[RMDB]
RNA sequence: GGGAACGACUCGAGUAGAGUCGAAAAGCAGAGAAGCCAUUCAGGUACAGUGAGUGUUGCAAAACCUUCAAGCACAACUGCUACCUUGUUGCUCAUCAGUGAGUUCACACAGGAGUGACACUGUUACAUGGGCUAAAUGUGGCAAGUCAUACAUGAAACUCAUUAGUGCUUUCGAGCACUAAUGAGUAAAAGAAACAACAACAACAAC
Reactivity to DMS in 0.01 (KOAc 150mM, MgCl2 10mM, bicine 150mM(pH8.5), 24C), signal-to-noise 3, nucleotides 027 to 156: g060c010a120g010a190g020a080a100g060c040c000a090u000u000c150a040g000g030u000a000c020a020g000u000g020a120g070u000g000u000u010g040c040a130a070a100a170c110c120u010u010c080a080a140g000c050a010c020a120a070c040u000g010c050u000a050c000c050u000u000g020u000u010g020c010u040c060a090u010c020a100g020u000g010a150g020u010u020c040a080c030a120c060a300g010g020a300g000u000g010a100c040a070c000u000g000u000u000a120c090a060u000g020g020g020c090u000a070a030a040u000g010u010g010g020c020a090a060g030u000c020a110u000a070c060a060u010g000a120a130
Reactivity to 2A3 in 0.01 (KOAc 150mM, MgCl2 10mM, bicine 150mM(pH8.5), 24C), signal-to-noise 6, nucleotides 027 to 156: g070c070a000g030a010g040a200a010g000c010c010a030u060u090c070a020g000g000u000a020c010a000g020u010g090a180g050u020g110u090u110g070c130a060a100a150a210c020c020u160u160c090a060a020g030c000a000c000a030a010c010u020g050c080u010a010c000c000u010u040g030u050u060g000c010u000c010a030u020c000a010g000u000g020a110g110u100u060c020a020c010a030c030a060g090g180a120g120u000g000a010c000a000c020u010g020u040u090a110c070a080u010g000g010g010c020u030a030a050a080u150g000u010g010g000c010a050a020g050u050c020a040u090a180c060a060u160g160a150a060
This 207-nucleotide RNA was probed chemically with DMS and 2A3. For DMS the reverse transcriptase was MarathonRT. Reactivities are given for positions 27 through 156. Conditions: 150 mM KOAc, 10 mM MgCl2 and 150 mM bicine (pH 8.5), 24 C. For 2A3 the reverse transcriptase was SuperScript II with manganese.